[RMDB]
RNA sequence: GGGAACGACUCGAGUAGAGUCGAAAAUUGCUCCAAUUAUUUCAUUCGAUUUUUCUUCGACAGUUUGAGCUAUUAAUUCAGAAGCAGCUUGAGCAUCAUCCAAUUUCGUAGAUAUAUCGUUAAGUCCAGAUAAAGUGUUAGAAGCGGAUUUAGCCGCCUCACUUUACGCAUUCGUGCGUAAAGUGAGAAAAGAAACAACAACAACAAC
Reactivity to 2A3 in 0.01 (KOAc 150mM, MgCl2 10mM, bicine 150mM(pH8.5), 24C), signal-to-noise 2, nucleotides 027 to 156: u040u070g020c000u020c010c010a030a130u130u070a080u060u120u130c010a070u110u030c050g050a090u110u130u050u050u050c090u040u030c040g040a040c030a110g000u100u080u050g020a000g010c020u050a020u060u100a300a210u150u160c080a010g060a230a030g020c050a030g000c020u040u030g070a010g000c010a020u130c010a020u060c040c060a040a050u100u090u070c000g000u040a000g020a020u070a010u010a020u120c020g050u060u010a020a010g030u040c010c070a010g000a100u050a120a190a050g060u060g010u070u060a050g050a170a000g000c030g000g000a000u000u070u090a020g080c010c000g000c010